[RMDB]
The record gives the reactivity of an RNA of 177 nucleotides to 2A3. Reactivities are given for positions 27 through 126. Conditions: 150 mM KOAc, 10 mM MgCl2 and 150 mM bicine (pH 8.5), 24 C.

RNA sequence: GGGAACGACUCGAGUAGAGUCGAAAAUUUGCCUAAGUGAAAAUUGCGUGAUAAACUUUUUCAUAUCUAGUAUGCACGCUUCUUCGCCCUGUUGCAUGAAUUCAUCCAAUUCACUAGGGUCAUCCAAGGCACCAGGAUAGUUCGCUAUCCUGGUGCCAAAAGAAACAACAACAACAAC
Reactivity to 2A3 in 0.01 (KOAc 150mM, MgCl2 10mM, bicine 150mM(pH8.5), 24C), signal-to-noise 1, nucleotides 027 to 126: u040u000u090g130c030c000u060a110a040g060u020g250a000a010a020a300u220u070g000c000g000u000g000a000u000a170a270a050c010u120u110u110u170u110c140a060u090a220u300c210u140a080g000u040a220u260g020c000a000c000g000c000u060u000c000u070u100c040g000c100c000c000u000g100u100u000g000c050a050u000g000a000a000u040u140c060a150u020c090c060a000a000u020u020c000a000c010u000a000g010g000g130u140c030a010u000c060c020a040a000